[RMDB]
RNA sequence: GGGAACGACUCGAGUAGAGUCGAAAAGAUAUGGACUCCGCUUUUGACGGCUUAAUAUCGGAAACGAUAUGAAGGCCGAUAAGCGAGUCCUAAGUCAAACCGCCUACUGCUUCGGCAGUAGGCGGAACUUAUCUUGACAGUUCGCUGUCAAGAUAAGAAAAGAAACAACAACAACAAC
Reactivity to DMS in 0.01 (KOAc 150mM, MgCl2 10mM, bicine 150mM(pH8.5), 24C), signal-to-noise 4, nucleotides 027 to 126: g010a050u000a300u000g000g000a010c000u000c090c100g020c000u000u000u000u000g010a130c090g010g000c010u000u000a200a010u000a000u000c000g020g000a110a080a180c010g010a020u000a000u010g000a110a210g000g010c010c010g020a070u010a000a010g020c010g010a030g020u000c000c010u000a010a060g000u010c030a060a120a200c000c000g010c000c000u010a020c000u000g000c000u000u000c230g030g000c000a000g010u000a000g000g020c000g010g010a000a000
Reactivity to 2A3 in 0.01 (KOAc 150mM, MgCl2 10mM, bicine 150mM(pH8.5), 24C), signal-to-noise 1, nucleotides 027 to 126: g010a030u080a020u140g000g010a000c010u090c140c160g000c070u060u090u080u210g270a150c040g010g000c050u140u060a040a000u000a020u010c000g010g000a040a050a030c010g000a000u010a020u010g070a110a080g040g000c000c010g010a010u010a010a000g000c000g000a000g000u000c000c000u000a040a000g020u010c010a050a050a120c010c000g000c010c000u020a010c020u030g080c000u030u140c300g170g000c020a000g030u000a000g000g010c000g000g000a000a000